[RMDB]
RNA sequence: GGGAACGACUCGAGUAGAGUCGAAAACCCGGAGGGAGAGAACCACGCGGAGAAGGCGGAAAAAUCACCUCCAGAGGACCCCUUCAGCGAACAGAAGAGCCCCGCACGGGAUAGGAGUAAGACCAUAAGACGAGUGGGUUCGCCCACUCGAAAAGAAACAACAACAACAAC
Reactivity to 2A3 in 0.01 (KOAc 150mM, MgCl2 10mM, bicine 150mM(pH8.5), 24C), signal-to-noise 3, nucleotides 027 to 129: c000c000c000g000g020a020g010g050g030a100g000a000g000a060a010c040c000a060c060g050c060g050g060a120g020a130a050g060g010c080g010g000a090a020a000a000a000u050c050a060c030c000u000c030c040a000g010a040g010g020a050c020c000c000c000u030u070c020a000g000c000g020a020a010c000a060g040a060a000g020a080g030c000c030c000c020g030c040a040c040g030g020g000a030u080a050g000g000a010g030u080a040a010g050a070c010c010a040u090a150a030g070a070
Reactivity to DMS in 0.01 (KOAc 150mM, MgCl2 10mM, bicine 150mM(pH8.5), 24C), signal-to-noise 3, nucleotides 027 to 129: c020c000c070g000g060a080g010g050g000a110g020a000g020a060a110c000c110a110c100g030c080g040g050a130g000a060a050g040g000c160g070g050a040a040a020a070a020u050c060a020c080c020u000c060c050a080g030a080g000g080a070c190c040c010c040u020u040c110a100g030c070g010a020a030c030a050g020a070a080g010a120g030c170c060c000c080g040c170a100c080g060g030g030a000u060a040g030g000a000g010u020a050a110g000a100c030c000a110u060a050a040g010a140
Record summary: The data come from the RNA Mapping Database (RMDB), library 15KLIB. Structure probing data (2A3 and DMS) for a 170-nucleotide construct. DMS adducts were read by reverse transcription with MarathonRT. For 2A3, 4,829 sequencing reads were counted.